[RMDB]
RNA sequence: GGGAACGACUCGAGUAGAGUCGAAAACAGCGCUCAACUCUGAAAAACAUCAAGACCAUGUGUCUCUAACUGUGCCACUCUGUGGUUCAGGAAACCUGGUUGAAAAACUUUCACCAUGGUUCAUGGAAAGCGGUCGGGUUCGCCCGACCGAAAAGAAACAACAACAACAAC
Reactivity to 2A3 in 0.01 (KOAc 150mM, MgCl2 10mM, bicine 150mM(pH8.5), 24C), signal-to-noise 3, nucleotides 027 to 129: c010a000g060c020g000c000u030c040a010a110c020u000c020u070g030a090a060a000a050a010c090a100u200c040a060a030g030a050c000c000a030u040g060u030g010u040c030u000c000u040a070a060c000u020g010u030g000c000c000a030c040u250c070u090g000u000g030g010u000u000c000a000g010g000a050a000a000c000c000u010g000g010u080u110g070a000a000a000a020a080c010u040u040u010c020a010c010c000a020u170g080g000u010u050c000a020u030g020g000a020a000a000g040
Reactivity to DMS in 0.01 (KOAc 150mM, MgCl2 10mM, bicine 150mM(pH8.5), 24C), signal-to-noise 4, nucleotides 027 to 129: c070a120g010c050g010c080u010c080a090a100c020u000c140u020g030a000a040a060a050a250c300a110u010c080a060a060g010a090c020c010a040u020g000u010g040u060c080u010c040u020a080a150c060u000g000u000g080c090c090a000c010u040c100u110g020u040g000g000u000u000c020a010g000g030a070a000a090c000c000u020g000g010u000u060g030a060a010a000a220a220c300u000u000u000c070a030c040c000a040u040g050g030u040u010c010a060u010g020g060a030a000a130g060
This 170-nucleotide RNA was probed chemically with 2A3 and DMS. The 2A3 profile rests on 4,278 reads.